[RMDB]
RNA sequence: GGGAACGACUCGAGUAGAGUCGAAAAUAGAGGUAGAGCAAGUGCUGAUAAUAUGAUUUCAGUUCAUCACGGCAUGGUUUAUUUGCAUCAUGAACUAGGAAAAUUUUUAGAUGAUGCUAAAUAUUACUGUGCGCUAUUAUUUCGAUAAUAGCGCACAAAAAGAAACAACAACAACAAC
Reactivity to DMS in 0.01 (KOAc 150mM, MgCl2 10mM, bicine 150mM(pH8.5), 24C), signal-to-noise 3, nucleotides 027 to 126: u060a050g010a030g030g070u040a040g010a050g000c040a100a140g020u000g010c020u030g010a080u010a110a100u060a150u050g010a080u000u010u030c120a020g000u030u010c040a040u050c100a060c070g000g000c020a000u010g000g000u000u030u000a000u010u010u000g000c000a020u000c020a000u010g010a050a290c070u000a020g000g000a010a150a050a120u010u000u020u030u020a050g010a110u000g020a010u010g000c010u060a040a010a020u000a030u070u010a070c120
Reactivity to 2A3 in 0.01 (KOAc 150mM, MgCl2 10mM, bicine 150mM(pH8.5), 24C), signal-to-noise 3, nucleotides 027 to 126: u090a010g080a020g010g090u030a010g000a000g030c050a020a100g080u080g070c010u000g120a030u050a180a030u150a110u160g140a110u000u130u040c030a050g030u070u110c030a000u050c040a050c050g060g000c030a040u080g040g030u050u040u030a040u000u050u030g000c000a000u000c000a000u030g110a150a060c040u010a050g090g000a010a030a180a140u140u150u020u040u030a030g000a000u010g010a000u010g010c030u080a000a080a020u110a020u070u120a130c120